[RMDB]
RNA sequence: GGGAACGACUCGAGUAGAGUCGAAAAGAUAUGGAGACGCGAAGAACACCCGGUGACUAUAAUCUCGGAAACGAGGUAGUCACGGGUGGGAGCGUCUCCUAAGUCAAAACAACGCUUCGGCGUUGAACGCAUCUACAAGGUUCGCCUUGUAGAUGCGAAAAGAAACAACAACAACAAC
Reactivity to DMS in 0.01 (KOAc 150mM, MgCl2 10mM, bicine 150mM(pH8.5), 24C), signal-to-noise 1, nucleotides 027 to 126: g010a050u000a300u000g030g000a010g050a020c000g000c000g010a130a150g030a260a090c000a000c000c000c000g010g010u000g000a010c000u000a050u010a170a050u010c000u010c000g020g000a030a100a220c010g030a000g060g000u000a040g000u010c000a010c000g000g010g020u000g000g000g010a080g040c020g010u000c000u010c000c000u000a010a080g010u000c020a060a040a120a300c000a010a000c000g020c000u000u000c180g020g000c000g030u000u000g000a090a160
Reactivity to 2A3 in 0.01 (KOAc 150mM, MgCl2 10mM, bicine 150mM(pH8.5), 24C), signal-to-noise 2, nucleotides 027 to 126: g000a000u090a020u170g000g010a020g020a010c010g070c000g190a300a130g060a150a000c040a000c000c040c070g260g170u070g010a000c000u000a000u090a300a300u150c010u000c010g000g020a050a060a040c020g030a000g030g000u010a000g010u000c000a000c010g010g000g020u020g010g030g000a010g010c000g000u020c000u010c000c000u000a000a000g000u000c010a010a020a040a080c010a000a000c000g040c010u030u120c250g120g020c000g030u000u000g000a030a000